[RMDB]
RNA sequence: GGGAACGACUCGAGUAGAGUCGAAAACGUUGAGUUCGCUCAACGAAAAAAACCUUUGUGGACCACCCGUAGACGAUGAGACAGGGUCGCCCAUUGGGCGAUUUGUCGAGUCUACCCGUGGUCCACUCUGGUAAAAAGCCGAUGUUCGCAUCGGCAAGUCUGCAUUCAGGUUCGCCUGAAUGCAGACAAAAGAAACAACAACAACAAC
Reactivity to 2A3 in 0.01 (KOAc 150mM, MgCl2 10mM, bicine 150mM(pH8.5), 24C), signal-to-noise 1, nucleotides 027 to 156: c000g000u000u000g000a000g020u060u090c300g060c080u000c000a010a000c020g050a260a010a000a010a000a000a000c040c000u030u060u000g010u000g020g000a000c000c000a000c010c080c050g020u010a000g010a020c080g130a280u200g120a050g000a070c000a000g300g000g000u000c000g000c000c030c030a300u200u290g010g010g010c010g020a000u080u000u020g000u010c030g010a030g010u000c000u000a000c000c010c060g000u040g040g010u020c010c000a000c000u000c000u000g000g020u070a060a030a060a130a000g000c000c000g000a000u000g020u080u240c230g020c210a020u010c000g030g000c000a000a030